[RMDB]
About this RNA:
This 177-nucleotide RNA was probed chemically with 2A3 and DMS. The data come from the RNA Mapping Database (RMDB), library OK2TRN. For DMS the reverse transcriptase was MarathonRT. The RNA was probed in 150 mM KOAc, 10 mM MgCl2 and 150 mM bicine (pH 8.5) at 24 C. 2A3 adducts were read by reverse transcription with SuperScript II with manganese.
RNA sequence: GGGAACGACUCGAGUAGAGUCGAAAACGGACGGGAUUUUAGCCUGGUUGCAGGUUUACCCAUUUCGUGCUGGGUCCUGGACCCAUUUAAGAUGAUAGAAAUAUUAUCGAUUUCUUUACCGUCCGGAAAUACGAGUAGUCUUCGGACUACUCGUAUUAAAAGAAACAACAACAACAAC
Reactivity to 2A3 in 0.01 (KOAc 150mM, MgCl2 10mM, bicine 150mM(pH8.5), 24C), signal-to-noise 2, nucleotides 027 to 126: c000g010g000a000c020g000g000g060a060u030u050u070u300a010g060c020c010u000g000g080u080u210g150c000a000g020g010u090u070u180a050c000c010c010a020u070u210u210c190g030u100g070c030u010g010g020g010u000c000c050u000g000g020a000c000c000c020a000u000u090u020a060a040g000a020u060g010a020u030a030g050a040a050a010u020a020u070u090a050u050c020g010a050u030u060u060c050u050u160u100a060c000c010g000u000c000c000g000g000a010
Reactivity to DMS in 0.01 (KOAc 150mM, MgCl2 10mM, bicine 150mM(pH8.5), 24C), signal-to-noise 4, nucleotides 027 to 126: c010g010g010a020c010g000g020g000a150u000u000u000u000a060g010c260c120u000g000g000u000u010g000c010a010g000g000u010u020u020a070c010c010c000a060u010u020u010c200g010u010g010c280u000g010g010g020u000c000c040u010g010g000a030c040c000c100a050u010u000u010a080a160g000a010u000g010a020u000a010g010a150a070a150u000a010u000u000a030u000c040g000a150u000u000u000c050u000u000u010a150c010c000g010u000c000c000g010g000a050